RNA sequence: GGGAACGACUCGAGUAGAGUCGAAAAGAUAUGGACCCUAAUACCAGCAACAGCUCGGAAACGAGACAUGCUGAGUAUAGGGUCCUAAGUCAAAAGACGUUAAUGAAGUUCGCUUCAUUAACGUCAAGUUAUUCUGGUUCUUCGGAACCAGAAUAACAAAAGAAACAACAACAACAAC
Reactivity to 2A3 in 0.01 (KOAc 150mM, MgCl2 10mM, bicine 150mM(pH8.5), 24C), signal-to-noise 1, nucleotides 027 to 126: g040a000u080a020u170g010g000a000c000c000c000u050a170a070u010a040c000c010a000g020c020a030a060c030a250g060c000u010c010g010g050a050a050a060c000g000a010g050a030c020a040u080g000c020u010g050a020g050u000a010u010a020g000g000g010u010c000c010u010a010a010g010u000c000a000a000a050a090g010a010c000g010u020u020a000a000u010g000a010a000g020u060u140c170g080c210u010u000c000a000u020u000a000a000c020g000u000c000a010a000
Reactivity to DMS in 0.01 (KOAc 150mM, MgCl2 10mM, bicine 150mM(pH8.5), 24C), signal-to-noise 4, nucleotides 027 to 126: g000a030u000a300u010g000g000a010c000c010c000u010a070a050u010a020c010c010a010g020c000a020a140c300a180g000c000u000c000g010g000a080a090a220c020g000a010g010a040c100a180u000g000c000u000g000a090g020u000a010u000a020g010g020g010u000c000c000u010a000a090g010u000c040a060a100a110a100g010a000c000g020u000u000a000a000u000g010a020a010g010u000u020c230g010c010u010u010c000a000u000u000a000a010c010g000u000c010a000a030